[RMDB]
RNA sequence: GGGAACGACUCGAGUAGAGUCGAAAACAAGAAGUUCCCGGAGGGAUCCAAGAGACGGAUGACUUUCCCCUAUUGGUUGGGAAAAGUCCCGGAACCAGGAAAUGGGAAAGAGACGGUAGAAAAGAGCACAGAACUAACUUCGGUUAGUUCAAAAGAAACAACAACAACAAC
Reactivity to DMS in 0.01 (KOAc 150mM, MgCl2 10mM, bicine 150mM(pH8.5), 24C), signal-to-noise 9, nucleotides 027 to 129: c060a070a090g040a080a080g020u000u000c020c000c040g000g000a040g030g030g010a080u030c020c010a090a110g000a110g030a170c100g000g000a070u050g000a080c040u010u000u000c030c000c010c120u000a170u020u010g020g020u020u010g000g000g040a020a020a030a040g030u000c000c060c030g010g050a090a100c070c030a060g030g010a030a080a080u050g000g000g000a050a040a040g030a050g030a060c080g000g000u010a050g010a060a060a060a060g020a060g000c070a090c170a150
Reactivity to 2A3 in 0.01 (KOAc 150mM, MgCl2 10mM, bicine 150mM(pH8.5), 24C), signal-to-noise 8, nucleotides 027 to 129: c030a010a050g120a100a020g030u040u020c000c000c000g000g000a020g020g000g010a010u030c010c010a070a030g030a030g020a060c040g000g010a050u120g010a030c000u020u010u020c010c000c000c010u060a190u180u300g160g020u090u100g010g000g000a020a060a020a010g040u000c000c000c000g020g010a000a020c040c010a000g020g020a020a070a070u130g010g000g000a020a050a000g020a000g010a010c040g010g010u070a020g090a030a090a010a000g050a010g000c060a030c010a100
The data come from the RNA Mapping Database (RMDB), library 15KLIB. The record gives the reactivity of an RNA of 170 nucleotides to DMS and 2A3. The RNA was probed in 150 mM KOAc, 10 mM MgCl2 and 150 mM bicine (pH 8.5) at 24 C.